[RMDB]
RNA sequence: GGGAACGACUCGAGUAGAGUCGAAAAGCAUUCCACUUCGGUGGAAUGCAAAUGCCGGCUGCAAGAAAAGUGCUACAAAGAGUGGGAGCACUGCCGAAGAAAAAAGUUCCAUGUUCGCAUGGAACAAUCUAUGACUUCGGUUCGCCGAAGUCAUAGAAAAAGAAACAACAACAACAAC
Reactivity to 2A3 in 0.01 (KOAc 150mM, MgCl2 10mM, bicine 150mM(pH8.5), 24C), signal-to-noise 1, nucleotides 027 to 126: g020c000a020u010u060c020c010a010c010u010u020c180g060g000u000g000g000a000a000u000g000c000a030a010a040u080g000c010c010g000g010c030u060g030c030a070a000g020a110a180a020a000g020u010g010c010u010a040c020a030a200a020g170a130g070u180g010g150g080a030g010c000a000c030u010g000c010c010g150a140a080g170a070a120a010a010a000a020g010u010u000c000c000a010u010g100u010u020c250g000c090a000u040g000g000a010a000c020a000a030
Reactivity to DMS in 0.01 (KOAc 150mM, MgCl2 10mM, bicine 150mM(pH8.5), 24C), signal-to-noise 1, nucleotides 027 to 126: g000c000a000u000u000c000c010a030c000u000u040c240g040g020u000g000g000a030a010u000g000c000a010a100a070u000g030c020c010g020g000c030u000g020c080a080a090g010a120a070a140a030g050u000g010c000u020a070c080a120a190a170g000a130g000u000g000g020g010a030g000c000a000c010u020g000c000c000g000a060a070g020a010a080a050a060a020a120g010u000u000c000c020a010u000g020u000u020c290g020c020a010u000g020g040a000a000c000a030a060
An RNA of 177 nucleotides, treated with 2A3 and DMS and read out base by base. Values cover nucleotides 27 to 126. The reactions ran in a buffer of 150 mM KOAc, 10 mM MgCl2 and 150 mM bicine (pH 8.5), at 24 C. 2A3 adducts were read by reverse transcription with SuperScript II with manganese.